Structure probing data (2A3 and DMS) for a 207-nucleotide construct.
[RMDB]
RNA sequence: GGGAACGACUCGAGUAGAGUCGAAAAUCCUAAGUCUAUAACCAAGUGAGGGUCAUGGGAGGUCGAUCGGAAACGAUCGACCUUUGAUCAUGACCUACCCACCACUUGAAGUUAUAGAUAUGGAAAAGAAUGGCGAGGAUUCGUCCUCGCCAUUCAACCCUACUCUAGGUUUCGACCUAGAGUAGGGAAAAGAAACAACAACAACAAC
Reactivity to 2A3 in 0.01 (KOAc 150mM, MgCl2 10mM, bicine 150mM(pH8.5), 24C), signal-to-noise 1, nucleotides 027 to 156: u040c000c000u010a110a030g000u010c000u000a000u000a000a020c000c000a000a000g000u000g010a000g010g010g000u010c000a010u010g020g010g010a020g010g000u020c010g000a010u010c020g060g080a270a060a060c010g000a010u020c000g000a030c170c070u020u030u010g010a000u010c000a000u010g010a000c000c000u000a000c000c000c010a040c020c000a030c000u000u020g070a090a040g010u000u000a000u010a010g000a000u020a040u030g010g010a010a040a090a100g000a020a000u020g000g000c000g000a000g010g000a020u090u150c230g020u030c010c000u010c000g010c000c000a000u000u000c000a000a000
Reactivity to DMS in 0.01 (KOAc 150mM, MgCl2 10mM, bicine 150mM(pH8.5), 24C), signal-to-noise 1, nucleotides 027 to 156: u010c000c010u000a070a200g030u000c010u020a000u000a040a040c000c020a060a070g000u000g010a170g010g000g000u000c010a010u000g020g010g020a020g000g030u000c000g010a030u000c000g030g040a250a130a300c030g000a030u000c020g040a010c010c000u000u000u000g000a070u030c020a020u020g010a010c000c000u000a010c020c000c040a300c070c040a010c030u000u000g000a150a070g060u010u000a050u000a000g000a040u010a230u020g000g000a110a130a110a090g020a000a020u000g070g020c000g010a060g050g010a130u000u000c280g020u000c010c000u000c000g010c000c010a000u020u000c010a000a090
DMS adducts were read by reverse transcription with MarathonRT.
The DMS profile rests on 1,553 reads.
For 2A3, 1,681 sequencing reads were counted.
As a SHAPE reagent, 2A3 marks flexible, mostly unpaired nucleotides at the ribose 2'-OH.